[RMDB]
Notes: An RNA of 170 nucleotides, treated with DMS and 2A3 and read out base by base. 2A3 adducts were read by reverse transcription with SuperScript II with manganese. The RNA was probed in 150 mM KOAc, 10 mM MgCl2 and 150 mM bicine (pH 8.5) at 24 C.
RNA sequence: GGGAACGACUCGAGUAGAGUCGAAAAGUUACGACUUGUUACGUGACUGUGAUGCUGUAGCUCCCCAUGAUUUCUUCAUCUUUGAUGUAGACAAAGUUAAAACACCUCAUAUUGUACGUCAGCGUUUAAGGAUAGUUGUUCGCAACUAUCAAAAGAAACAACAACAACAAC
Reactivity to DMS in 0.01 (KOAc 150mM, MgCl2 10mM, bicine 150mM(pH8.5), 24C), signal-to-noise 9, nucleotides 027 to 129: g030u020u010a000c040g040a090c120u050u030g020u010u000a070c000g000u020g020a000c050u000g000u000g020a070u010g050c040u000g000u030a090g000c010u000c000c000c000c090a090u080g020a080u030u020u010c030u000u010c030a050u000c000u040u020u070g040a040u030g000u040a030g000a070c250a050a100a070g020u050u030a070a070a090a090c090a090c000c000u000c000a080u030a070u060u030g030u010a050c080g000u000c040a050g010c140g040u000u000u000a090a110g000
Reactivity to 2A3 in 0.01 (KOAc 150mM, MgCl2 10mM, bicine 150mM(pH8.5), 24C), signal-to-noise 9, nucleotides 027 to 129: g010u010u020a020c020g050a070c140u150u170g060u170u090a020c010g010u020g040a020c020u020g060u080g070a090u150g010c050u050g020u060a030g030c020u010c010c010c000c000a060u110g070a160u090u110u030c010u050u030c020a040u010c050u050u060u290g030a030u030g020u040a010g010a020c050a050a100a040g020u100u150a080a140a050a030c070a060c000c010u040c040a020u070a060u110u140g060u080a030c050g080u030c030a010g020c010g040u040u090u110a040a010g100